RNA sequence: GGGAACGACUCGAGUAGAGUCGAAAAUGUGUACUAGUAUGGAUAGGGCACUAAUCUUUACUCUAUUUAGUGCAAAACUAUAAUUUCUCGUACAACAUAAAAUGUGAAGAAAAGUUAUAGUUAGAUUACCAACGGUAUGAUUCGUCAUACCGUUGGUAAAAGAAACAACAACAACAAC
Reactivity to 2A3 in 0.01 (KOAc 150mM, MgCl2 10mM, bicine 150mM(pH8.5), 24C), signal-to-noise 4, nucleotides 027 to 126: u130g020u000g000u020a020c010u000a010g080u020a050u090g020g020a020u020a030g000g010g010c060a050c150u080a020a040u040c020u070u230u080a090c040u030c010u080a070u040u070u010a010g000u000g000c000a140a000a000a010c000u010a000u010a010a020u040u050u030c000u000c000g010u040a010c030a120a000c000a120u190a070a110a060a090u150g040u050g060a090a150g060a070a070a010a060g030u020u030a050u030a030g030u030u020a040g040a170u020u020
Reactivity to DMS in 0.01 (KOAc 150mM, MgCl2 10mM, bicine 150mM(pH8.5), 24C), signal-to-noise 1, nucleotides 027 to 126: u000g000u000g000u000a030c050u020a010g090u000a100u000g000g000a030u000a020g000g000g000c100a110c160u000a070a100u020c010u010u000u000a160c170u000c120u000a090u000u000u000a000g000u000g020c000a030a120a030a010c000u000a010u000a010a000u020u030u010c030u000c000g020u000a110c090a180a050c060a010u050a110a020a030a300u080g000u010g030a090a120g000a010a030a000a000g000u000u000a040u000a000g000u000u000a060g000a150u000u010
The record gives the reactivity of an RNA of 177 nucleotides to 2A3 and DMS. 2A3 adducts were read by reverse transcription with SuperScript II with manganese. Source: RMDB libraries RFM100 and RFMREP, as collected in RNAgym. The reactions ran in a buffer of 150 mM KOAc, 10 mM MgCl2 and 150 mM bicine (pH 8.5), at 24 C. Values cover nucleotides 27 to 126.